Structure probing data (2A3 and DMS) for a 177-nucleotide construct. The 2A3 profile rests on 3,150 reads.

RNA sequence: GGGAACGACUCGAGUAGAGUCGAAAAAGAGGAGGGAUGGACCGUAUAGUAUCGCGGAUCCUGGUAAAAGUAGCAGAAUAGAAUGGUGAAAAUCCAUUCCGCCGAAAGGGCAAAGGUUCCUUGGCAACUUGAGUCUAGGAUUCGUCCUAGACUCAAGAAAAGAAACAACAACAACAAC
Reactivity to 2A3 in 0.01 (KOAc 150mM, MgCl2 10mM, bicine 150mM(pH8.5), 24C), signal-to-noise 4, nucleotides 027 to 126: a000g060a040g060g020a070g010g000g000a030u110g090g020a030c010c000g020u000a040u060a060g170u040a040u190c090g000c040g030g010a160u020c000c000u020g030g020u180a140a170a050a030g050u110a010g050c050a000g040a080a020u140a080g000a020a000u010g030g000u010g000a000a000a000a000u000c000c000a000u000u000c010c000g010c020c010g160a120a050a050g030g030g000c110a170a110a010g140g050u060u120c010c000u040u050g010g000c020a050a030
Reactivity to DMS in 0.01 (KOAc 150mM, MgCl2 10mM, bicine 150mM(pH8.5), 24C), signal-to-noise 5, nucleotides 027 to 126: a060g010a090g010g000a090g000g010g010a090u020g000g000a070c050c020g010u000a070u030a120g000u020a060u020c130g020c020g010g000a080u000c020c020u000g000g010u030a040a060a060a100g010u000a060g000c090a070g000a080a090u020a080g010a020a000u000g000g000u000g000a070a050a170a140u010c000c000a010u000u000c010c240g000c030c030g000a060a040a060g000g000g000c050a050a080a080g010g000u010u000c000c020u010u020g010g010c180a060a130
The reactions ran in a buffer of 150 mM KOAc, 10 mM MgCl2 and 150 mM bicine (pH 8.5), at 24 C. High 2A3 reactivity points to a flexible backbone, as in loops and unpaired stretches.